Structure probing data (2A3 and DMS) for a 207-nucleotide construct. Conditions: 150 mM KOAc, 10 mM MgCl2 and 150 mM bicine (pH 8.5), 24 C. It was measured as part of the RMDB library OK3TST. 2A3 adducts were read by reverse transcription with SuperScript II with manganese. Values cover nucleotides 27 to 156. DMS adducts were read by reverse transcription with MarathonRT. The 2A3 profile rests on 1,738 reads. For DMS, 2,532 sequencing reads were counted.

[RMDB]
RNA sequence: GGGAACGACUCGAGUAGAGUCGAAAAGAUGGAGAGAUGGCUCAGUGGUUAAGGGCACUGACUGCUCUUUCUGAGGACCCAGUGCAGCCUCAGAGUCAAUGAGAAGACAGACUCUGCACUUGGCGUGCAUUCACCCCCAAGUGUAUGGAAGCCAUCAGCAGUAAUCCUAGUUCGCUAGGAUUACUGCAAAAGAAACAACAACAACAAC
Reactivity to 2A3 in 0.01 (KOAc 150mM, MgCl2 10mM, bicine 150mM(pH8.5), 24C), signal-to-noise 3, nucleotides 027 to 156: g090a050u190g030g030a090g010a000g000a050u040g000g000c010u020c020a030g000u060g030g120u070u120a110a080g020g040g010c020a010c030u030g030a020c030u020g050c000u020c000u010u090u000c050u020g010a030g020g040a070c000c000c060a020g050u060g070c030a000g000c000c000u010c020a000g010a010g060u070c020a050a210u270g020a060g040a140a050g060a030c040a030g000a000c010u000c020u030g000c000a000c040u000u010g010g000c100g030u090g010c030a100u110u230c040a100c000c030c020c000c010a020a000g070u000g000u000a060u070g050g030a070a010g000c000c030a000u030c000a010
Reactivity to DMS in 0.01 (KOAc 150mM, MgCl2 10mM, bicine 150mM(pH8.5), 24C), signal-to-noise 2, nucleotides 027 to 156: g020a130u000g030g020a090g000a140g000a050u000g030g020c020u000c020a110g010u000g030g060u000u000a090a020g050g020g050c000a070c020u000g040a220c130u000g010c010u000c010u000u000u000c060u000g030a070g050g040a090c030c060c050a210g020u010g070c070a170g010c060c000u000c030a010g000a080g020u000c050a060a110u000g020a120g000a110a140g010a100c020a130g000a060c010u000c050u000g010c020a000c000u000u000g020g060c070g020u000g020c040a120u000u020c100a130c000c000c060c000c030a060a060g030u000g030u000a100u000g000g010a050a100g000c030c010a000u000c000a060